[RMDB]
RNA sequence: GGGAACGACUCGAGUAGAGUCGAAAAGAUAUGGAGAAUUCGGGAGCUCAAAAAGUGUCGGAAACGACAUACAAAGAGCGAGGAUCGAGAUUCUCCUAAGUCAAAGCCAUUCCUUCGGGAAUGGCAACUUCAAGCAAUUCUUCGGAAUUGCUUGAAGAAAAGAAACAACAACAACAAC
Reactivity to DMS in 0.01 (KOAc 150mM, MgCl2 10mM, bicine 150mM(pH8.5), 24C), signal-to-noise 1, nucleotides 027 to 126: g010a020u000a000u000g010g000a000g000a010a030u000u020c020g020g000g010a010g010c000u000c000a070a050a080a210a210g030u000g020u000c000g020g000a000a000a010c000g040a030c000a020u000a120c280a070a190a170g000a010g030c010g000a070g010g000a010u000c010g000a040g040a060u000u000c000u000c000c000u010a000a060g000u010c000a070a090a210g010c020c000a000u010u000c010c000u000u000c260g040g010g000a000a010u000g000g010c020a000a030
Reactivity to 2A3 in 0.01 (KOAc 150mM, MgCl2 10mM, bicine 150mM(pH8.5), 24C), signal-to-noise 1, nucleotides 027 to 126: g000a010u000a010u030g010g000a000g010a000a000u010u010c030g040g010g010a030g020c010u000c030a040a060a050a030a120g040u000g010u010c010g020g000a020a000a000c000g010a000c000a010u070a060c080a040a230a050g010a010g000c030g000a140g040g020a010u020c020g010a060g000a300u020u010c010u000c000c000u000a000a000g000u020c010a100a080a090g000c000c000a000u000u010c020c000u020u040c300g110g000g020a000a000u010g000g000c010a020a010
The data come from the RNA Mapping Database (RMDB), library TTRDEL. An RNA of 177 nucleotides, treated with DMS and 2A3 and read out base by base. DMS adducts were read by reverse transcription with MarathonRT. High 2A3 reactivity points to a flexible backbone, as in loops and unpaired stretches. The reactions ran in a buffer of 150 mM KOAc, 10 mM MgCl2 and 150 mM bicine (pH 8.5), at 24 C.